[RMDB]
This 177-nucleotide RNA was probed chemically with DMS and 2A3.
2A3 adducts were read by reverse transcription with SuperScript II with manganese.
DMS adducts were read by reverse transcription with MarathonRT.
The reactions ran in a buffer of 150 mM KOAc, 10 mM MgCl2 and 150 mM bicine (pH 8.5), at 24 C.
RNA sequence: GGGAACGACUCGAGUAGAGUCGAAAAUGCAGGGUCCCAUUGGGUUCCGAGGGCCGCCUGGGAUCCCAGGAGCGCCUGGGAAAGCGGUACGUGUGUCAGUGGACGGUGGGCGCCAUGCCUCGUGACCGACAUCCACCUGAUUCGUCAGGUGGAUGUCAAAAGAAACAACAACAACAAC
Reactivity to DMS in 0.01 (KOAc 150mM, MgCl2 10mM, bicine 150mM(pH8.5), 24C), signal-to-noise 2, nucleotides 027 to 126: u010g020c070a020g000g000g020u000c000c000c000a100u020u000g010g030g010u000u000c060c000g000a100g010g000g000c030c050g010c120c050u000g010g000g000a290u010c030c010c010a030g000g000a230g000c300g030c030c010u000g010g000g000a040a070a190g010c030g000g000u000a040c120g030u020g020u010g010u000c020a100g030u020g020g000a060c050g020g020u020g010g010g020c080g010c020c020a010u010g010c040c030u010c060g010u020g010a130c100c040
Reactivity to 2A3 in 0.01 (KOAc 150mM, MgCl2 10mM, bicine 150mM(pH8.5), 24C), signal-to-noise 1, nucleotides 027 to 126: u150g000c000a040g040g030g010u070c000c010c010a030u040u120g040g010g080u110u000c050c020g060a110g020g040g020c000c000g040c010c030u090g080g120g040a100u040c000c000c000a000g030g000a140g170c300g170c070c020u020g040g020g010a070a030a000g070c000g030g020u090a060c060g040u160g010u030g060u040c030a060g030u110g090g030a030c000g000g000u110g020g020g000c090g000c010c000a050u100g080c010c010u030c050g090u030g030a030c020c040